[RMDB]
RNA sequence: GGGAACGACUCGAGUAGAGUCGAAAAACGCUCAUGUGCGACAUGAACUCAGUGCGUACUGUCCUACAGUACGCAAACGGCUUCUGUAGGACAGAGGCCAGAGUUAAUCUGUUACACAGAUUAGCGAGGACAGCAUAGUAUUCGUACUAUGCUGUCCAAAAGAAACAACAACAACAAC
Reactivity to DMS in 0.01 (KOAc 150mM, MgCl2 10mM, bicine 150mM(pH8.5), 24C), signal-to-noise 3, nucleotides 027 to 126: a070c030g030c010u000c150a050u000g020u000g020c120g020a070c000a020u030g000a010a010c000u000c020a220g020u000g010c020g000u000a030c000u000g010u010c130c070u000a140c010a000g020u000a010c070g020c010a010a010a070c280g010g010c010u010u000c000u000g000u000a140g000g060a300c030a000g000a070g000g000c000c010a130g000a020g000u000u000a030a030u000c010u000g020u000u030a070c080a180c020a010g000a120u000u010a010g000c010g000a200
Reactivity to 2A3 in 0.01 (KOAc 150mM, MgCl2 10mM, bicine 150mM(pH8.5), 24C), signal-to-noise 3, nucleotides 027 to 126: a000c000g000c000u010c010a020u030g020u090g110c070g090a030c000a020u100g030a050a030c010u000c010a070g080u030g110c010g000u060a050c000u010g030u120c040c040u070a030c000a000g000u010a010c000g000c000a010a020a000c040g040g010c010u010u030c000u000g080u110a080g110g190a040c010a010g020a010g000g010c000c000a010g000a000g010u000u000a010a030u000c000u000g030u040u080a030c050a000c000a040g030a070u060u050a020g000c010g010a060
This 177-nucleotide RNA was probed chemically with DMS and 2A3. Conditions: 150 mM KOAc, 10 mM MgCl2 and 150 mM bicine (pH 8.5), 24 C. Values cover nucleotides 27 to 126. High 2A3 reactivity points to a flexible backbone, as in loops and unpaired stretches. For 2A3, 4,888 sequencing reads were counted. For DMS the reverse transcriptase was MarathonRT.